[RMDB]
RNA sequence: GGGAACGACUCGAGUAGAGUCGAAAACUCAACACAAGAGUUCAGAUUCAUGACUGCUAACAAUCUAACUGCACCUAGAAAUUCUUGGGAGGCUAUGGCUCUGAACUUUAAGUUAAUAGGUAUUGGCACUUUAUAGCACCUUCGGGUGCUAUAAAGUAAAAGAAACAACAACAACAAC
Reactivity to DMS in 0.01 (KOAc 150mM, MgCl2 10mM, bicine 150mM(pH8.5), 24C), signal-to-noise 1, nucleotides 027 to 126: c040u010c040a040a060c170a100c070a170a150g000a020g000u000u000c000a040g000a020u000u010c010a030u000g010a030c040u000g010c040u000a020a020c130a050a050u010c010u000a090a160c080u000g010c100a020c090c050u000a000g000a110a130a100u020u000c140u000u000g000g000g010a050g000g020c150u000a010u000g000g020c070u000c010u000g010a030a010c000u000u000u000a050a120g010u000u000a070a100u010a130g010g010u010a100u000u000g000g040c160
Description:
The record gives the reactivity of an RNA of 177 nucleotides to DMS. It was measured as part of the RMDB library 15KREP. DMS adducts were read by reverse transcription with MarathonRT. The DMS profile rests on 647 reads.